[RMDB]
RNA sequence: GGGAACGACUCGAGUAGAGUCGAAAAGACGCCUGUGUGGCGAAACGAGCAAUGGAAUAAGCCGCAAUAGAAGAUGAGAUGGAAGCGGCAAGAUAGAAUGCUCGCAACCAGAUCCAUCUCACAGAGAGAUCGCACCAUUAUUCGUAAUGGUGCGAUCAAAAGAAACAACAACAACAAC
Reactivity to DMS in 0.01 (KOAc 150mM, MgCl2 10mM, bicine 150mM(pH8.5), 24C), signal-to-noise 2, nucleotides 027 to 126: g000a170c050g030c000c010u000g000u000g000u040g020g000c000g030a070a180a120c050g000a030g000c010a070a050u100g020g070a200a200u010a040a150g030c010c010g050c000a160a030u070a180g010a080a080g000a120u000g000a000g050a000u000g000g000a050a200g020c000g000g010c000a070a030g000a280u080a000g000a140a050u020g020c000u000c000g000c120a150a130c000c000a120g000a160u010c030c000a000u000c000u010c000a070c110a020g010a090g000a220
Reactivity to 2A3 in 0.01 (KOAc 150mM, MgCl2 10mM, bicine 150mM(pH8.5), 24C), signal-to-noise 3, nucleotides 027 to 126: g070a010c020g060c000c000u170g070u060g180u290g280g000c000g000a050a020a000c050g010a000g030c010a080a080u060g000g090a130a030u170a120a000g010c010c000g050c020a000a080u090a150g190a050a020g080a160u040g010a000g000a000u000g010g000a140a070g010c000g000g000c010a000a000g000a000u200a030g180a110a070u150g000c010u040c000g000c000a030a050c030c030a030g010a010u000c000c000a000u000c020u010c030a040c020a000g220a000g040a000